[RMDB]
RNA sequence: GGGAACGACUCGAGUAGAGUCGAAAAUUCGCUGAACUACUAGAGCAACGAUUGAUUGACAAUCCAGGAUGGAUAUUAAGUCCAUAUCCUGUUGCAAUACCACACCUAAGAGACAAUAUGAUUAAACGCUAUUCAAGACGUUCGCGUCUUGAAUAGCAAAAGAAACAACAACAACAAC
Reactivity to DMS in 0.01 (KOAc 150mM, MgCl2 10mM, bicine 150mM(pH8.5), 24C), signal-to-noise 1, nucleotides 027 to 126: u010u000c050g010c030u030g020a070a100c020u000a090c110u000a030g010a050g020c040a040a040c100g010a020u010u040g000a120u010u000g000a120c040a030a070u000c210c060a020g000g010a080u000g000g020a000u000a190u000u010a120a120g020u000c010c000a040u000a120u000c000c000u000g000u000u010g000c000a020a000u000a090c020c060a020c140a070c090c020u000a020a030g000a160g000a070c090a080a020u000a070u000g000a130u000u000a020a010a080c190
Reactivity to 2A3 in 0.01 (KOAc 150mM, MgCl2 10mM, bicine 150mM(pH8.5), 24C), signal-to-noise 2, nucleotides 027 to 126: u030u000c010g000c040u070g010a050a040c010u110a050c040u090a050g070a020g040c010a040a060c010g020a060u050u110g040a040u020u050g140a140c050a020a020u090c000c010a000g010g070a010u030g060g000a000u010a050u210u170a180a010g000u000c030c010a010u020a110u120c000c000u000g000u020u000g010c000a000a050u000a080c090c000a030c030a020c040c030u120a110a030g050a010g100a060c020a080a100u140a090u220g120a040u110u150a030a070a010c080

An RNA of 177 nucleotides, treated with DMS and 2A3 and read out base by base. Source: RMDB library OK2TRN, as collected in RNAgym. DMS adducts were read by reverse transcription with MarathonRT. Conditions: 150 mM KOAc, 10 mM MgCl2 and 150 mM bicine (pH 8.5), 24 C. For DMS, 770 sequencing reads were counted.